RNA sequence: GGGAACGACUCGAGUAGAGUCGAAAAAUGGUAGUUAGUCUACUCGCUAUCCUAGUUACUUUGGAGUAAUCUAAAGUGUGUGUAAACGGGCGAAACUCUGUAAAAUACUGGGGACAUAGGGUCAACAAGAACUAGUAGACCUUCGGGUCUACUAGAAACGAACAAGUAUCUUCGGAUACUUGUUCGUAAAAGAAACAACAACAACAAC
Reactivity to DMS in 0.01 (KOAc 150mM, MgCl2 10mM, bicine 150mM(pH8.5), 24C), signal-to-noise 2, nucleotides 027 to 156: a130u000g010g040u010a010g020u000u000a080g010u000c020u000a040c020u000c070g000c060u000a110u020c040c020u000a190g010u000u000a040c000u000u000u000g000g000a080g010u000a110a120u010c010u000a010a020a050g020u000g040u040g000u000g000u000a070a090a120c050g010g080g040c070g000a120a100a170c010u000c050u010g020u000a070a100a060a100u000a060c010u000g010g020g030g050a080c090a090u000a100g020g000g000u000c060a070a070c060a040a130g010a110a250c000u000a010g010u000a020g010a030c000c000u000u010c200g040g050g000u000c000u000a000c000u010a010g040a030a040
Reactivity to 2A3 in 0.01 (KOAc 150mM, MgCl2 10mM, bicine 150mM(pH8.5), 24C), signal-to-noise 2, nucleotides 027 to 156: a000u060g020g050u020a050g020u070u090a060g050u080c000u030a040c010u030c040g020c010u070a090u100c010c010u040a040g060u050u050a020c020u040u010u020g010g000a010g040u090a080a080u010c010u030a000a030a020g030u040g000u010g010u000g010u030a080a120a060c050g010g070g000c030g010a040a040a060c040u000c040u050g050u110a040a080a050a040u110a080c050u040g010g000g000g000a010c010a060u090a070g050g010g010u030c010a000a050c020a110a020g070a100a050c000u000a000g000u000a000g000a000c010c000u000u020c100g030g000g000u000c000u000a000c000u010a000g000a010a010

Structure probing data (DMS and 2A3) for a 207-nucleotide construct. For DMS, 3,378 sequencing reads were counted. As a SHAPE reagent, 2A3 marks flexible, mostly unpaired nucleotides at the ribose 2'-OH. The RNA was probed in 150 mM KOAc, 10 mM MgCl2 and 150 mM bicine (pH 8.5) at 24 C.